An RNA of 177 nucleotides, treated with DMS and 2A3 and read out base by base. Values cover nucleotides 27 to 126. The RNA was probed in 150 mM KOAc, 10 mM MgCl2 and 150 mM bicine (pH 8.5) at 24 C.

RNA sequence: GGGAACGACUCGAGUAGAGUCGAAAAGCUCACGUUCGGCGCUUAAAUCAUAGAAUUUGGCUGUACUCAUUUGGCCUCCAUGCGCUCAAACUCAAUUACCCAGCACCAUGGAUUAACUUCAAAGGUGGAAUCACUUAGACUUCGGUCUAAGUGAUUCAAAAGAAACAACAACAACAAC
Reactivity to DMS in 0.01 (KOAc 150mM, MgCl2 10mM, bicine 150mM(pH8.5), 24C), signal-to-noise 1, nucleotides 027 to 126: g060c030u000c020a070c130g010u000u020c060g010g000c080g050c070u000u020a020a030a110u010c080a140u000a070g010a100a040u000u010u000g000g000c000u010g000u010a050c120u010c060a060u020u000u000g000g000c020c030u020c080c110a070u000g010c060g040c040u020c040a070a040a100c080u000c070a030a090u030u000a210c000c000c040a110g000c020a030c000c020a150u000g010g010a070u000u010a070a060c140u010u000c020a040a040a080g010g010u000g010
Reactivity to 2A3 in 0.01 (KOAc 150mM, MgCl2 10mM, bicine 150mM(pH8.5), 24C), signal-to-noise 1, nucleotides 027 to 126: g020c010u050c080a020c080g080u110u120c060g000g000c030g020c040u090u100a010a070a080u090c050a130u050a130g110a300a130u160u060u130g040g000c000u010g050u080a040c050u060c110a210u090u080u130g040g000c000c000u000c040c050a010u050g000c030g000c010u070c070a020a020a020c030u060c010a000a080u090u040a110c010c000c010a000g020c010a010c000c000a020u070g020g010a060u060u160a150a030c160u060u000c050a180a040a000g040g000u020g030